[RMDB]
RNA sequence: GGGAACGACUCGAGUAGAGUCGAAAACGGCAGUUCGCUGCCGAAAAAAACCUUUGUGCUCCGAGUUGUCAGUAGGGAGAAUGCCCAUUGGGCAUUCACACCUACUUGGAUUUACGUUUGACGAGCACUCUGGUAAAAACAGCUGUUCGCAGCUGAAACGUACAAUCCAGUUCGCUGGAUUGUACGUAAAAGAAACAACAACAACAAC
Reactivity to DMS in 0.01 (KOAc 150mM, MgCl2 10mM, bicine 150mM(pH8.5), 24C), signal-to-noise 1, nucleotides 027 to 156: c020g010g060c000a000g000u000u010c300g040c020u010g000c010c000g000a000a000a050a100a110a040a020c010c000u000u000u000g020u000g000c030u000c010c000g010a200g030u000u000g010u010c020a020g010u000a000g030g010g000a190g010a010a010u000g030c010c000c010a300u010u010g040g070g000c000a010u000u000c010a020c080a220c030c000u000a010c000u010u000g030g010a070u000u000u000a030c030g010u020u000u010g010a250c130g000a010g010c000a010c010u000c060u020g010g040u010a030a040a100a080a090c050a060g050c040u000g010u010u010c230g050c030a050g020c010u010g000a020a080
Reactivity to 2A3 in 0.01 (KOAc 150mM, MgCl2 10mM, bicine 150mM(pH8.5), 24C), signal-to-noise 3, nucleotides 027 to 156: c020g000g000c020a010g040u090u200c240g080c130u010g000c000c010g010a030a000a000a000a010a000a010c020c000u010u000u000g000u000g010c020u010c020c020g120a100g060u020u040g010u040c020a010g000u020a000g000g000g020a080g000a010a000u000g000c010c030c060a280u210u300g000g000g000c010a000u010u000c000a020c020a010c020c000u000a010c000u000u040g020g000a020u190u080u250a060c060g080u060u170u250g080a050c030g000a000g000c000a000c000u000c010u000g000g030u090a110a030a010a000a030c000a000g000c000u010g090u130u100c230g030c150a000g000c000u000g000a100a090

Source: RMDB library RNAMAK, as collected in RNAgym. Structure probing data (DMS and 2A3) for a 207-nucleotide construct. 2A3 adducts were read by reverse transcription with SuperScript II with manganese. The DMS profile rests on 2,857 reads. For DMS the reverse transcriptase was MarathonRT. The reactions ran in a buffer of 150 mM KOAc, 10 mM MgCl2 and 150 mM bicine (pH 8.5), at 24 C.